The record gives the reactivity of an RNA of 177 nucleotides to 2A3 and DMS. Values cover nucleotides 27 to 126. The data come from the RNA Mapping Database (RMDB), library M2PK50. The 2A3 profile rests on 13,534 reads.
RNA sequence: GGGAACGACUCGAGUAGAGUCGAAAAUUACCUCCCUUCGGGGAGGUAAACUGAACGCUGCAAGCGGCAGCGCGCUCGCUUGGGCACACACGCACAAUAAAAGCAGUAUGCACUUCGGUGCAUACAACCAUGUUAAUUGGUUCGCCAAUUAACAUGGAAAAGAAACAACAACAACAAC
Reactivity to 2A3 in 0.01 (KOAc 150mM, MgCl2 10mM, bicine 150mM(pH8.5), 24C), signal-to-noise 6, nucleotides 027 to 126: u020u000a000c000c000u000c020c010c010u010u040c220g050g000g000g000a020g000g000u000a010a010a000c010u020g060a060a010c060g020c030u230g140c030a040a070g060c020g090g000c040a050g210c050g040c050g000c090u150c050g020c010u030u040g000g010g010c010a020c010a000c000a010c040g090c010a040c030a140a170u160a160a110a020a000g040c060a020g000u000a000u000g000c000a000c010u030u080c210g070g000u000g000c000a000u000a000c000a000a000
Reactivity to DMS in 0.01 (KOAc 150mM, MgCl2 10mM, bicine 150mM(pH8.5), 24C), signal-to-noise 4, nucleotides 027 to 126: u000u000a000c000c000u000c010c000c000u000u020c160g040g010g010g000a010g000g000u000a000a010a080c070u010g010a100a120c130g020c010u000g000c020a060a060g010c080g010g020c010a120g010c110g010c140g010c020u010c030g020c060u000u000g000g000g030c020a120c110a060c070a070c110g010c050a060c140a050a030u020a040a070a080a090g000c150a130g010u000a000u000g000c000a010c000u000u010c190g020g020u000g010c000a000u000a000c000a110a130